[RMDB]
RNA sequence: GGGAACGACUCGAGUAGAGUCGAAAAGUUGUUAAUAAUUUAGACAAGAGUGCUGGCCAUCCUUUUAAUAAGUUUGGCAAAGCUCGUGUCUAUUAUGAGAGCAUGUCUUACCAGGAGCAAGAUGAACAGAGUACGCACUUCGGUGCGUACAAAAGAAACAACAACAACAAC
Reactivity to DMS in 0.01 (KOAc 150mM, MgCl2 10mM, bicine 150mM(pH8.5), 24C), signal-to-noise 1, nucleotides 027 to 129: g020u000u020g080u090u000a080a040u030a080a040u000u020u010a070g000a010c050a080a080g040a040g030u010g000c130u040g000g020c000c000a020u000c000c000u000u000u000u000a110a120u020a030a000g040u000u000u000g000g110c080a010a080a180g010c000u020c000g000u000g020u040c000u000a000u000u040a050u020g030a080g000a030g000c020a070u030g050u000c040u000u000a070c200c050a070g010g030a060g000c020a020a030g020a050u010g020a070a080c160a100g020a080
Reactivity to 2A3 in 0.01 (KOAc 150mM, MgCl2 10mM, bicine 150mM(pH8.5), 24C), signal-to-noise 2, nucleotides 027 to 129: g000u020u000g030u050u000a070a040u150a100a070u090u050u040a000g000a000c000a030a000g020a010g000u010g000c020u030g020g050c000c000a000u000c000c000u120u170u050u070a270a210u300a210a000g000u050u000u030g020g040c020a000a270a000g000c000u000c010g060u010g020u050c000u000a050u130u050a010u020g080a000g000a000g000c020a100u000g040u000c040u010u000a060c000c070a000g000g040a060g010c020a080a010g060a030u070g000a010a010c090a040g030a000
The record gives the reactivity of an RNA of 170 nucleotides to DMS and 2A3. For DMS the reverse transcriptase was MarathonRT. The 2A3 profile rests on 1,643 reads. 2A3 adducts were read by reverse transcription with SuperScript II with manganese. The reactions ran in a buffer of 150 mM KOAc, 10 mM MgCl2 and 150 mM bicine (pH 8.5), at 24 C. It was measured as part of the RMDB library 15KLIB. For DMS, 5,279 sequencing reads were counted.